RNA sequence: GGGAACGACUCGAGUAGAGUCGAAAAUGCCCGACUGCGGGGCAUACGGAUACUGAUCGAGAUCGAUGGACCCUCGCAUGCGGGCAAUGGCUGGCAAUGGGGUCCUGCCGCCGGACUGGGCAACAUGUAAAUCAUAUAUGUUCGCAUAUAUGAUUUAAAAAGAAACAACAACAACAAC
Reactivity to 2A3 in 0.01 (KOAc 150mM, MgCl2 10mM, bicine 150mM(pH8.5), 24C), signal-to-noise 9, nucleotides 027 to 126: u050g000c000c000c000g030a080c010u030g010c010g000g000g010g030c040a020u090a090c050g130g020a050u150a230c040u120g100a300u230c130g080a080g020a160u040c020g010a030u030g040g090a110c010c000c000u020c020g010c010a010u130g020c010g010g000g000c010a010a030u050g020g010c040u050g030g000c020a040a170u140g010g000g020g020u030c000c020u010g010c010c010g000c010c000g020g020a050c060u080g000g020g020c030a060a020c040a080u140g040
Reactivity to DMS in 0.01 (KOAc 150mM, MgCl2 10mM, bicine 150mM(pH8.5), 24C), signal-to-noise 9, nucleotides 027 to 126: u010g000c000c000c000g010a050c050u010g010c020g010g000g000g000c080a070u030a100c090g010g000a050u010a070c050u020g010a120u030c180g010a120g010a060u010c010g010a100u020g010g010a210c300c010c000u000c050g000c010a020u010g010c000g000g000g000c010a040a030u020g000g000c020u020g010g000c050a060a090u030g000g010g010g000u010c010c020u000g000c020c020g000c030c020g000g000a090c060u010g000g000g010c060a080a060c150a070u030g000